[RMDB]
RNA sequence: GGGAACGACUCGAGUAGAGUCGAAAAUAUCAGGCCUGCCCGUUCCAAGCCAAGAGCUGAGCCAUGUGACCCUAGCGAAGGCCCGGGUUACUUGUCUCCUAAAGUGGGGGGCAAUGCGUGAGGCUGGUUUCACAGAGCAGCGACAACCUCCCGCUCCGAAUAUACGUUUGUUCGCAAACGUAUAUUCAAAAGAAACAACAACAACAAC
Reactivity to 2A3 in 0.01 (KOAc 150mM, MgCl2 10mM, bicine 150mM(pH8.5), 24C), signal-to-noise 4, nucleotides 027 to 156: u130a000u030c050a030g050g020c000c010u010g030c040c030c020g020u040u020c020c010a050a030g050c040c010a160a050g050a030g060c130u110g000a000g000c010c010a030u050g010u000g010a010c010c020c000u030a000g010c040g160a230a040g200g020c010c030c010g000g000g000u010u000a020c000u010u010g010u000c000u000c000c040u200a230a130a030g010u030g000g000g000g000g000g000c000a000a010u000g000c000g020u040g000a000g000g030c000u020g030g030u120u280u300c180a200c010a030g020a000g030c000a000g000c020g060a130c100a230a300c010c000u010c020c000c000g000c000u040c010c030
Reactivity to DMS in 0.01 (KOAc 150mM, MgCl2 10mM, bicine 150mM(pH8.5), 24C), signal-to-noise 1, nucleotides 027 to 156: u010a080u000c040a160g010g000c000c000u000g030c050c010c110g030u000u000c050c010a110a150g010c050c040a110a120g020a240g030c080u000g000a120g000c020c000a030u020g020u020g000a040c000c000c000u000a040g020c010g020a180a140g010g020c000c000c140g000g050g000u010u030a020c040u000u010g040u000c010u000c010c110u020a060a070a080g040u000g010g010g000g060g060g060c020a040a080u000g030c050g010u000g010a100g010g040c000u000g000g010u030u000u000c160a120c080a040g000a050g010c010a190g010c020g000a110c010a120a090c010c010u000c000c010c000g030c030u000c060c050